[RMDB]
RNA sequence: GGGAACGACUCGAGUAGAGUCGAAAAAGCGGCGAGUCAGUGGUACGCCACUGACUCCCCGCAAUACGUUCAUCCUAAUUUAAUCAAAUUAGGACGGAAGUAGUCGUGAGACGAAGGAACGCAUUAAAAAACGUAGCGGUCUUCGGACCGCUACGAACGUACUAUGAACGUUCGCGUUCAUAGUACGAAAAGAAACAACAACAACAAC
Reactivity to 2A3 in 0.01 (KOAc 150mM, MgCl2 10mM, bicine 150mM(pH8.5), 24C), signal-to-noise 2, nucleotides 027 to 156: a000g020c010g000g000c010g010a010g000u000c000a000g000u010g030g000u060a080c300g070c030c000a000c010u010g000a010c010u000c000c000c000c000g000c030a000a020u130a030c010g000u000u000c000a000u000c000c000u000a000a070u010u000u090a200a220u190c190a070a010a020u010u000a010g000g020a000c010g000g010a050a010g000u020a000g000u000c020g000u060g100a090g000a000c010g000a030a000g020g010a010a000c020g020c010a030u150u280a070a160a060a010a000a000c010g000u000a000g000c010g020g000u000c000u030u070c120g070g020a000c000c000g010c000u000a000c000g000a010a000
Reactivity to DMS in 0.01 (KOAc 150mM, MgCl2 10mM, bicine 150mM(pH8.5), 24C), signal-to-noise 1, nucleotides 027 to 156: a040g060c000g130g020c030g000a040g020u000c010a000g000u020g070g020u000a190c300g010c030c000a060c000u000g030a030c010u000c020c010c030c020g080c010a060a030u020a000c000g000u000u000c000a190u000c010c020u000a000a000u000u000u000a160a220u010c300a070a010a010u010u010a000g000g020a040c070g010g000a010a030g020u000a150g010u000c010g050u000g050a300g030a060c050g020a170a060g020g000a040a040c000g010c080a070u030u000a000a020a120a100a100a150c060g050u000a090g000c000g010g000u000c000u000u000c300g030g010a000c000c000g030c000u000a000c020g000a000a010